[RMDB]
RNA sequence: GGGAACGACUCGAGUAGAGUCGAAAACUAUGGCAUGUUACAACACCCAAUCUCCCUAAUUAGGAAACAUCCCAAUUUAUUCUUGACUUUGCUAAUUAACACUAGUGACCCACAGGUGACACCUUGCUGUGUUGAGGGAGAAAGUCCAAGGAAAGGAGAGUCACUCCUGAUUCGUCAGGAGUGACUCAAAAGAAACAACAACAACAAC
Reactivity to 2A3 in 0.01 (KOAc 150mM, MgCl2 10mM, bicine 150mM(pH8.5), 24C), signal-to-noise 1, nucleotides 027 to 156: c040u100a150u080g010g040c140a020u040g020u130u140a070c060a140a070c020a090c030c050c000a000a070u050c110u070c000c000c010u060a090a080u020u020a000g000g010a090a030a080c040a050u050c050c020c000a050a070u080u150u080a140u230u000c010u050u020g060a050c000u060u040u070g030c000u030a040a040u000u050a100a000c070a050c120u000a030g000u090g240a090c050c050c000a040c060a030g120g000u040g090a040c000a010c080c010u010u110g010c020u010g000u000g000u000u050g000a060g010g000g040a060g010a010a000a000g000u000c080c000a020a000g150g080a040a080a080g180g030a110